[RMDB]
Chemical mapping of a 177-nucleotide RNA with 2A3 and DMS. In probing experiments dimethyl sulfate is read out at A N1 and C N3, which are open when not base-paired. The 2A3 profile rests on 2,011 reads. For DMS, 2,289 sequencing reads were counted. 2A3 adducts were read by reverse transcription with SuperScript II with manganese. The reactions ran in a buffer of 150 mM KOAc, 10 mM MgCl2 and 150 mM bicine (pH 8.5), at 24 C. The data come from the RNA Mapping Database (RMDB), library OK2TST.
RNA sequence: GGGAACGACUCGAGUAGAGUCGAAAAUUAGAAAGCGCAGCUUCUGUAGCUGGCCUUCUAUUAACAACAGAAGCUUUAAUUGCUGAUAUUCCUGAAGAGAAAUCCUCUUCUGUUCCAGCAAUGCCAAGAUGGAUAAUACGUUCGCGUAUUAUCCAUCAAAAGAAACAACAACAACAAC
Reactivity to 2A3 in 0.01 (KOAc 150mM, MgCl2 10mM, bicine 150mM(pH8.5), 24C), signal-to-noise 3, nucleotides 027 to 126: u060u000a020g020a020a030a010g010c300g000c200a010g000c000u120u040c150u300g190u200a010g000c000u010g030g000c010c000u020u000c000u000a040u040u090a070a040c050a020a010c010a040g110a130a010g080c010u090u110u270a160a040u050u000g000c000u000g000a030u010a080u200u080c060c080u000g020a020a010g010a000g030a070a120a100u090c000c010u000c000u000u000c010u010g050u070u030c040c000a000g000c000a020a000u040g040c040c030a040a040
Reactivity to DMS in 0.01 (KOAc 150mM, MgCl2 10mM, bicine 150mM(pH8.5), 24C), signal-to-noise 3, nucleotides 027 to 126: u010u000a020g020a030a010a040g030c000g040c040a010g000c000u010u010c300u020g020u000a020g020c010u000g010g000c030c030u000u010c000u000a020u000u000a100a070c100a090a080c060a130g010a170a120g000c120u000u010u000a070a050u010u000g000c000u010g010a120u000a120u000u000c100c060u000g020a020a010g000a010g000a180a180a140u020c220c020u000c000u000u000c000u000g000u010u010c120c020a010g000c010a010a020u000g020c140c160a060a170